[RMDB]
Chemical mapping of a 177-nucleotide RNA with 2A3 and DMS. It was measured as part of the RMDB library OK2TST. For DMS the reverse transcriptase was MarathonRT. Conditions: 150 mM KOAc, 10 mM MgCl2 and 150 mM bicine (pH 8.5), 24 C.
RNA sequence: GGGAACGACUCGAGUAGAGUCGAAAAAGGUCGAAAUGGUCUAUGUGUUGAUGUUAGGGAUGGAAGAUUCCACAACGGAAACGCAAUACAGUUGUGGCCAUGCAAGUCUAAUACAGAUGCAAAUCAGCGUUAGAUAAAGAUUCGUCUUUAUCUAACGAAAAGAAACAACAACAACAAC
Reactivity to 2A3 in 0.01 (KOAc 150mM, MgCl2 10mM, bicine 150mM(pH8.5), 24C), signal-to-noise 9, nucleotides 027 to 126: a000g050g030u080c030g030a090a030a070u050g020g000u030c050u100a170u060g030u000g010u000u020g030a110u040g020u040u040a090g000g020g030a020u030g020g110a110a040g080a200u180u000c020c000a070c010a060a020c020g060g030a040a020a000c030g000c010a010a020u100a050c050a030g050u140u100g090u220g070g000c010c000a010u020g020c030a070a050g030u000c020u060a050a060u170a160c090a030g060a050u060g060c040a040a050a130u090c030a040g100
Reactivity to DMS in 0.01 (KOAc 150mM, MgCl2 10mM, bicine 150mM(pH8.5), 24C), signal-to-noise 9, nucleotides 027 to 126: a060g010g010u000c040g010a090a130a040u000g010g010u000c040u010a090u010g030u000g010u000u000g000a290u020g010u000u000a130g010g000g010a060u000g000g020a140a140g000a180u010u000c000c000a040c070a030a040c030g000g000a190a030a030c050g010c030a030a070u000a050c130a070g010u010u010g010u000g000g010c020c020a040u000g000c110a080a130g010u000c030u000a060a100u010a100c160a060g010a060u000g000c130a050a070a080u000c080a120g000